[RMDB]
RNA sequence: GGGAACGACUCGAGUAGAGUCGAAAAGCCAGAGGGGUGCAGGCUAUAGCUGCCAUCGGCUGACCUAGAGAAGACACAUCAGCUGAUCCUUUGGACCCUUUGACUUGAGACAGAAGUUCUGGGCUUCUCCUCCUGCGGCCUAGCUCUGAGACAAUGAACCCAGCAUAAUAUUCGUAUUAUGCUGGGUAAAAGAAACAACAACAACAAC
Reactivity to DMS in 0.01 (KOAc 150mM, MgCl2 10mM, bicine 150mM(pH8.5), 24C), signal-to-noise 1, nucleotides 027 to 156: g020c030c020a080g040a050g030g000g000g010u000g080c060a050g020g030c090u000a140u000a120g030c010u000g000c020c180a240u010c000g020g030c020u000g010a050c010c010u000a160g010a170g010a130a100g020a170c070a130c090a190u000c040a080g020c010u000g000a030u010c040c070u000u010u000g040g000a110c000c000c020u030u000u040g030a080c060u000u000g000a300g010a170c040a090g010a080a080g010u000u000c090u000g040g010g070c010u000u000c000u000c010c040u000c040c010u010g080c110g000g000c040c010u020a080g010c010u000c030u000g010a220g000a110c080a020a100u000g000a070
Reactivity to 2A3 in 0.01 (KOAc 150mM, MgCl2 10mM, bicine 150mM(pH8.5), 24C), signal-to-noise 3, nucleotides 027 to 156: g030c000c000a000g010a000g000g030g020g040u280g040c060a020g060g030c080u170a100u150a260g050c030u010g020c010c040a010u010c010g010g000c010u020g010a020c010c060u090a080g060a020g050a140a060g120a080c080a010c000a110u010c000a000g010c000u000g000a050u130c010c010u110u020u070g070g090a120c000c000c030u050u040u070g030a070c010u020u060g050a060g020a060c010a010g080a110a010g060u110u070c030u030g030g020g010c010u050u000c040u140c050c030u060c000c020u100g010c040g040g000c000c000u010a030g010c010u000c020u040g030a050g000a040c070a050a110u120g040a050
Chemical mapping of a 207-nucleotide RNA with DMS and 2A3. 2A3 is a SHAPE reagent: it acylates the 2'-hydroxyl of flexible nucleotides of all four kinds. The data come from the RNA Mapping Database (RMDB), library OK3TST.